[RMDB]
RNA sequence: GGGAACGACUCGAGUAGAGUCGAAAAGGAGUGUACAGAGUGAUGACUCGCAGACUGCUAGGUUCAACACAGGUUGGAGUGGGAGUCAUGCAAGAGGGAGUCUUCCACACCAUGUGGCACGUUACAAGACGCAUUUCCGGUUCGCCGGAAAUGCGUCAAAAGAAACAACAACAACAAC
Reactivity to DMS in 0.01 (KOAc 150mM, MgCl2 10mM, bicine 150mM(pH8.5), 24C), signal-to-noise 1, nucleotides 027 to 126: g010g010a100g010u000g000u000a050c050a020g020a300g010u000g000a130u060g060a090c000u000c040g070c040a060g020a080c020u020g000c010u000a110g010g000u000u000c040a020a070c020a110c230a140g000g000u000u000g040g040a030g050u010g000g000g000a100g000u010c020a080u000g000c060a120a110g020a140g060g000g000a050g010u000c010u030u000c020c040a050c060a170c090c070a140u030g020u000g000g000c030a010c030g000u000u010a170c140a190a130
Reactivity to 2A3 in 0.01 (KOAc 150mM, MgCl2 10mM, bicine 150mM(pH8.5), 24C), signal-to-noise 1, nucleotides 027 to 126: g090g010a060g030u060g010u000a040c020a010g040a020g040u030g020a080u000g020a020c010u040c060g000c000a020g020a090c020u060g090c010u070a030g100g190u110u040c000a060a020c030a000c040a140g220g110u030u010g160g020a020g030u020g020g010g040a040g050u070c040a150u020g040c040a120a060g020a090g160g140g010a020g000u010c000u040u030c020c000a010c020a040c010c020a060u090g000u000g060g060c040a010c070g040u020u050a060c040a050a030